[RMDB]
RNA sequence: GGGAACGACUCGAGUAGAGUCGAAAACUGCAACGGGUCAUCCCGCAUGGCCUCAUCGCCGAGGUCGACCGCGGCACCUGGACACCCGCGCCGGUAUUCACCAUGAUUGCCCAGCGCGGCCGGGUCACACCGAUAUGUGUUUCGACACAUAUCGGUGAAAAGAAACAACAACAACAAC
Reactivity to 2A3 in 0.01 (KOAc 150mM, MgCl2 10mM, bicine 150mM(pH8.5), 24C), signal-to-noise 3, nucleotides 027 to 126: c020u050g020c040a180a110c040g020g000g040u050c010a010u050c010c010c040g000c060a140u230g000g000c000c030u030c020a100u110c120g160c140c100g000a000g020g030u040c030g010a060c030c070g060c020g110g060c030a020c010c000u030g040g000a050c010a090c100c010c000g010c010g020c000c030g000g020u020a050u040u070c080a130c180c120a130u300g030a050u030u150g020c000c020c020a050g010c000g000c000g020g000c000c010g000g010g000u010c040a020
Reactivity to DMS in 0.01 (KOAc 150mM, MgCl2 10mM, bicine 150mM(pH8.5), 24C), signal-to-noise 2, nucleotides 027 to 126: c130u010g000c080a080a210c080g000g000g020u000c040a170u000c030c010c010g040c170a100u000g030g000c010c030u020c030a100u010c300g030c200c200g010a030g000g010u000c000g000a040c050c090g010c110g000g000c090a080c000c000u010g000g010a060c060a160c300c000c010g030c000g020c010c300g020g000u000a060u000u000c050a040c160c250a110u040g010a040u010u000g030c040c010c080a080g000c020g030c000g000g010c060c010g000g000g000u000c060a200
Chemical mapping of a 177-nucleotide RNA with 2A3 and DMS. DMS adducts were read by reverse transcription with MarathonRT. For 2A3, 2,844 sequencing reads were counted.